Annotation
An RNA of 177 nucleotides, treated with DMS and 2A3 and read out base by base. The reactions ran in a buffer of 150 mM KOAc, 10 mM MgCl2 and 150 mM bicine (pH 8.5), at 24 C.
[RMDB]
RNA sequence: GGGAACGACUCGAGUAGAGUCGAAAAGUGAGUUCAUAACCGAGCAAUGAGUCGGGCGCUACCGUCAAGACGGUAUAGGACUGCACUACACCGGCGAUGCCGGAUAGAAAGCCCAUAUAGCCAUAAACGAAAGGUCUAGUUUCGACUAGACCUUUCGAAAAGAAACAACAACAACAAC
Reactivity to DMS in 0.01 (KOAc 150mM, MgCl2 10mM, bicine 150mM(pH8.5), 24C), signal-to-noise 2, nucleotides 027 to 126: g020u000g000a050g030u010u000c020a080u030a080a050c040c000g030a190g040c110a140a110u000g000a070g010u010c080g010g040g000c190g000c190u020a030c000c010g000u010c040a130a230g050a130c000g000g020u000a020u000a030g000g000a040c030u000g020c030a070c000u000a110c140a070c010c010g000g020c010g000a170u000g040c000c000g020g010a040u020a010g020a130a100a190g010c000c000c000a090u000a070u030a170g020c100c110a080u010a060a010a140
Reactivity to 2A3 in 0.01 (KOAc 150mM, MgCl2 10mM, bicine 150mM(pH8.5), 24C), signal-to-noise 1, nucleotides 027 to 126: g020u000g020a050g010u040u010c000a000u040a200a030c000c010g020a130g160c110a140a240u150g000a030g120u050c090g010g020g150c170g070c080u060a050c000c000g010u000c010a080a060g130a000c050g020g000u030a030u090a070g010g080a020c040u110g060c120a000c010u060a030c040a040c020c010g020g000c020g050a070u250g030c000c030g010g000a010u010a010g010a030a050a000g000c000c000c000a020u070a010u080a060g020c030c020a070u270a050a100a020